[RMDB]
The data come from the RNA Mapping Database (RMDB), library TTRDES. This 177-nucleotide RNA was probed chemically with 2A3 and DMS. 2A3 adducts were read by reverse transcription with SuperScript II with manganese.
RNA sequence: GGGAACGACUCGAGUAGAGUCGAAAAGUAGGGAUAUGGACUGUACUAGUACUAUUCACGCGUUGAAAGCUAAUCGGAAACGAUUAGCUGGAGCGUAGAUAGGACCGUACAGUCCUAAGUCAAUAAAUCAACACUAUAUGUUCGCAUAUAGUGUUGAAAAAGAAACAACAACAACAAC
Reactivity to 2A3 in 0.01 (KOAc 150mM, MgCl2 10mM, bicine 150mM(pH8.5), 24C), signal-to-noise 9, nucleotides 027 to 126: g260u260a100g070g170g040a040u050a040u180g010g000a000c010u010g000u020a010c010u030a030g020u000a010c000u010a010u060u140c040a010c010g020c000g280u300u060g020a030a010a000g010c000u000a000a000u000c010g020g040a080a050a040c010g000a010u000u000a000g010c000u000g000g010a010g000c000g010u000a010g000a010u010a000g030g000a000c010c000g000u000a000c010a000g000u000c000c000u000a000a000g000u000c010a010a160u180a200a140a080
Reactivity to DMS in 0.01 (KOAc 150mM, MgCl2 10mM, bicine 150mM(pH8.5), 24C), signal-to-noise 9, nucleotides 027 to 126: g020u010a090g020g010g010a050u010a300u010g010g010a020c000u000g000u000a010c000u000a070g010u000a150c000u000a010u000u000c040a020c010g020c000g010u000u010g010a180a160a040g000c000u000a000a010u000c000g010g000a160a100a210c010g010a010u000u000a000g010c000u000g000g000a050g020c000g030u000a020g010a010u000a000g000g000a080c280c250g000u000a000c000a010g000u000c000c000u000a010a060g010u000c060a090a100u010a070a120a140
For DMS the reverse transcriptase was MarathonRT.